RNA sequence: GGGAACGACUCGAGUAGAGUCGAAAAUUUUAAGGGGAUCAUCUUGACCCUCCUCUGGGAGAGCAGUGAGAACCUGCUGACAGUCGCAGAGGAGUUCUACCGUAAAGAAAAACGCCCAGUCACCAGGCCUGACUGCAUGUGUGACACCUUUGACCAAAGUACCGUAAUUAUUCGUAAUUACGGUACUAAAAGAAACAACAACAACAAC
Reactivity to DMS in 0.01 (KOAc 150mM, MgCl2 10mM, bicine 150mM(pH8.5), 24C), signal-to-noise 1, nucleotides 027 to 156: u000u010u010u000a040a050g000g000g020g000a130u000c000a080u020c030u040u020g030a120c030c030c020u000c000c010u000c090u010g030g000g000a080g010a070g000c000a020g000u010g010a300g010a240a300c190c010u010g030c000u000g010a090c040a180g000u000c000g020c030a050g010a060g030g030a130g000u010u010c020u000a120c090c070g000u000a030a020a140g010a060a050a080a210a110c150g010c000c060c000a060g000u000c020a060c010c000a190g010g030c150c070u010g020a070c020u000g000c030a070u030g040u010g000u000g010a130c030a020c020c000u000u000u000g000a150c050c030a030a240
Reactivity to 2A3 in 0.01 (KOAc 150mM, MgCl2 10mM, bicine 150mM(pH8.5), 24C), signal-to-noise 3, nucleotides 027 to 156: u120u130u090u110a080a070g010g020g000g030a020u070c010a010u030c150u050u100g050a030c030c000c010u000c010c000u000c010u010g030g110g000a100g010a000g020c010a010g010u060g030a070g040a120a120c020c010u010g000c000u000g040a090c030a140g090u030c070g000c170a000g000a000g030g010a000g000u060u000c030u100a120c060c040g080u080a010a100a060g040a080a100a050a020a000c050g030c030c000c000a010g040u010c000a000c020c010a010g020g050c050c030u110g070a120c070u050g020c020a070u050g150u040g000u030g030a020c000a040c010c010u100u120u190g110a050c070c060a200a060
The data come from the RNA Mapping Database (RMDB), library OK3TST. Chemical mapping of a 207-nucleotide RNA with DMS and 2A3. For 2A3 the reverse transcriptase was SuperScript II with manganese. Values cover nucleotides 27 to 156.